Chemical mapping of a 177-nucleotide RNA with DMS and 2A3. High 2A3 reactivity points to a flexible backbone, as in loops and unpaired stretches. For 2A3 the reverse transcriptase was SuperScript II with manganese. For 2A3, 915 sequencing reads were counted. The RNA was probed in 150 mM KOAc, 10 mM MgCl2 and 150 mM bicine (pH 8.5) at 24 C.
RNA sequence: GGGAACGACUCGAGUAGAGUCGAAAAUACGAAGUGAGCGGAGAUCUGCUAAUAACGGACUUUGUCUCAUUCAAGUUGUCAAAGCUCACAAACUUAUGUAAGACAAACUCUCUGGUUGAGUCAGCAACUCCAGUCCAUAGUUCGCUAUGGACUGGAGAAAAGAAACAACAACAACAAC
Reactivity to DMS in 0.01 (KOAc 150mM, MgCl2 10mM, bicine 150mM(pH8.5), 24C), signal-to-noise 2, nucleotides 027 to 126: u000a060c160g010a220a220g040u000g010a030g010c000g000g020a220g000a140u000c030u000g030c050u000a180a080u000a100a300c130g010g010a040c000u000u000u000g000u010c000u000c020a070u000u000c110a080a170g010u000u000g010u000c010a050a130a090g020c030u000c050a040c160a030a110a090c070u000u010a080u000g020u000a140a110g000a100c040a030a040a150c070u000c060u010c030u000g000g000u000u000g010a090g000u030c050a080g010c080a060a080
Reactivity to 2A3 in 0.01 (KOAc 150mM, MgCl2 10mM, bicine 150mM(pH8.5), 24C), signal-to-noise 1, nucleotides 027 to 126: u160a060c040g020a080a060g010u010g030a000g010c000g000g020a040g020a210u080c060u100g010c010u020a060a060u150a250a010c010g000g030a010c060u080u130u090g060u050c020u010c030a020u080u010c020a000a000g000u040u020g020u070c000a000a000a000g000c000u000c000a020c050a020a070a000c050u120u110a050u080g090u080a050a000g040a020c090a000a090a000c030u040c010u000c020u020g020g220u080u060g020a020g050u040c000a030g000c020a020a120